[RMDB]
Source: RMDB library OK1LIB, as collected in RNAgym. The record gives the reactivity of an RNA of 177 nucleotides to 2A3 and DMS.

RNA sequence: GGGAACGACUCGAGUAGAGUCGAAAAAUUGCGACUGUAGGUGAGAUUAUUUAUUCGCCUAUAGUUUCAGAACAACGCUUUAAAAUUAUUCCUAAAGCUAAAAGAGGAACAUAUAGUGCAGUUAAUGAGGGAGGAUGUUAUUCGUAACAUCCUCCCUAAAAGAAACAACAACAACAAC
Reactivity to 2A3 in 0.01 (KOAc 150mM, MgCl2 10mM, bicine 150mM(pH8.5), 24C), signal-to-noise 2, nucleotides 027 to 126: a000u050u100g030c020g040a040c040u030g000u000a000g000g000u200g000a020g000a060u010u010a160u300u300u160a130u150u000c000g040c000c000u000a000u000a000g000u000u000u000c050a040g000a130a070c150a060a020c140g000c000u290u140u280a090a100a070a030u200u230a000u050u000c000c000u050a090a100a000g030c070u110a010a000a200a000g180a160g000g100a070a000c070a000u220a030u120a080g150u150g060c060a040g000u260u180a180a100u230g060
Reactivity to DMS in 0.01 (KOAc 150mM, MgCl2 10mM, bicine 150mM(pH8.5), 24C), signal-to-noise 1, nucleotides 027 to 126: a070u010u010g050c070g020a030c000u000g020u000a030g040g000u000g030a080g030a090u050u000a260u040u020u020a090u040u000c000g000c000c050u000a000u000a000g000u000u000u000c000a000g000a190a190c220a070a150c210g020c020u020u000u010a020a040a070a040u000u010a200u010u010c000c010u000a110a030a040g040c040u000a010a030a000a030g000a080g000g030a070a050c080a130u040a030u030a020g000u000g020c070a040g000u000u000a000a070u000g030
DMS adducts were read by reverse transcription with MarathonRT. For 2A3 the reverse transcriptase was SuperScript II with manganese. Conditions: 150 mM KOAc, 10 mM MgCl2 and 150 mM bicine (pH 8.5), 24 C.